Source: RMDB library M2PK50, as collected in RNAgym. This 177-nucleotide RNA was probed chemically with 2A3 and DMS. Values cover nucleotides 27 to 126. As a SHAPE reagent, 2A3 marks flexible, mostly unpaired nucleotides at the ribose 2'-OH. The reactions ran in a buffer of 150 mM KOAc, 10 mM MgCl2 and 150 mM bicine (pH 8.5), at 24 C. The 2A3 profile rests on 964 reads.
RNA sequence: GGGAACGACUCGAGUAGAGUCGAAAACAACGCGUGUUCGCACGCGUUGAAAGAAAGCACGAAAAUAAAAUAAGGGAAAACGGAACGUGCACCCACCCAUAAAAACGAGCCCGUUCGCGGGCUCGAAUCUCUUUACUACGUUCGCGUAGUAAAGAGAAAAAGAAACAACAACAACAAC
Reactivity to 2A3 in 0.01 (KOAc 150mM, MgCl2 10mM, bicine 150mM(pH8.5), 24C), signal-to-noise 1, nucleotides 027 to 126: c000a010a000c000g010c010g000u000g010u100u110c190g010c090a000c000g000c000g010u000u000g000a000a000a000g060a010a090a000g050c010a000c040g060a120a220a030a030u250a110a190a080a080u300a170a190g110g010g040a080a090a020a020c080g040g010a090a050c010g000u010g000c020a020c030c020c020a030c030c030c010a070u220a130a140a020a000a030c000g000a000g000c000c080c000g000u000u040c210g040c010g080g000g000c010u000c000g000a000a000
Reactivity to DMS in 0.01 (KOAc 150mM, MgCl2 10mM, bicine 150mM(pH8.5), 24C), signal-to-noise 1, nucleotides 027 to 126: c000a010a000c000g020c010g090u000g020u010u000c180g020c000a000c000g000c000g010u000u000g000a020a080a130g000a170a050a060g010c020a000c010g020a070a060a110a120u000a070a120a070a080u000a190a030g010g030g010a060a060a100a120c150g020g000a110a140c000g000u000g000c010a150c080c030c060a190c030c020c030a120u000a070a080a060a080a180c010g000a010g080c030c000c000g000u000u020c130g000c120g110g000g000c000u000c000g000a010a030